[RMDB]
RNA sequence: GGGAACGACUCGAGUAGAGUCGAAAAGAAAGAAAGAAAAGACACUGAGUGAGAAUGAAACCAAUCGUAGUGUCGGUAAAGCGUAAUUUAAACUUUGCCAAUUCUCACAGCGAGAAAGACUCGCAAACGUGGUAUCGUGAUUCGUCACGAUACCACGAAAAGAAACAACAACAACAAC
Reactivity to DMS in 0.01 (KOAc 150mM, MgCl2 10mM, bicine 150mM(pH8.5), 24C), signal-to-noise 1, nucleotides 027 to 126: g060a160a020a050g020a080a080a160g000a030a050a020a080g030a060c000a000c010u000g010a150g050u020g010a060g000a080a000u000g050a060a030a130c040c050a120a130u000c000g000u000a030g000u000g000u000c020g000g000u000a000a000a000g000c270g000u020a060a120u000u000u080a050a130a140c000u000u000u000g060c000c000a020a000u050u000c000u000c050a000c000a160g060c000g000a050g020a090a120a020g070a240c090u000c000g000c000a120a060a110
Reactivity to 2A3 in 0.01 (KOAc 150mM, MgCl2 10mM, bicine 150mM(pH8.5), 24C), signal-to-noise 3, nucleotides 027 to 126: g120a010a070a020g120a040a090a000g100a040a090a010a000g020a020c010a000c020u030g050a060g030u010g010a010g000a000a030u020g010a010a040a050c010c000a000a060u060c000g010u010a020g010u000g000u000c010g010g000u000a000a000a000g010c030g070u030a090a290u020u080u280a110a140a020c000u040u000u000g000c010c000a020a030u080u030c000u000c000a010c000a010g010c030g020a000g030a020a110a040g070a130c000u000c010g000c000a010a010a010